The record gives the reactivity of an RNA of 207 nucleotides to 2A3.
Reactivities are given for positions 27 through 156.
Conditions: 150 mM KOAc, 10 mM MgCl2 and 150 mM bicine (pH 8.5), 24 C.
RNA sequence: GGGAACGACUCGAGUAGAGUCGAAAACGGGGCAACUCUUCUCAGAAUCCAGCAAGAGGCGUGGCGAGAGGGCCGCGGUGCUCUGGAGUAGAGGCUCUGCCUUCGAAACACCAUCGAUCGUCCCUUCUUCUUUACCUUCUUCUGGCUCUUCUUGGGGGUUGAAUGUCCUGUUCGCAGGACAUUCAACAAAAGAAACAACAACAACAAC
Reactivity to 2A3 in 0.01 (KOAc 150mM, MgCl2 10mM, bicine 150mM(pH8.5), 24C), signal-to-noise 1, nucleotides 027 to 156: c050g000g020g030g030c030a060a070c050u040c040u280u100c040u050c040a030g050a060a070u300c010c000a100g040c090a000a020g020a010g010g090c150g050u030g000g050c040g010a030g000a000g010g010g020c000c010g060c030g020g000u000g000c000u030c000u030g000g000a010g010u000a000g000a000g010g010c000u080c150u300g050c050c000u180u200c020g000a010a010a010c000a020c220c000a010u000c000g080a260u030c020g010u000c000c030c000u090u010c010u040u010c020u010u050u080a020c000c020u020u000c000u000u040c000u000g000g000c000u000c000u020u000c060u000u050g010g000g000g040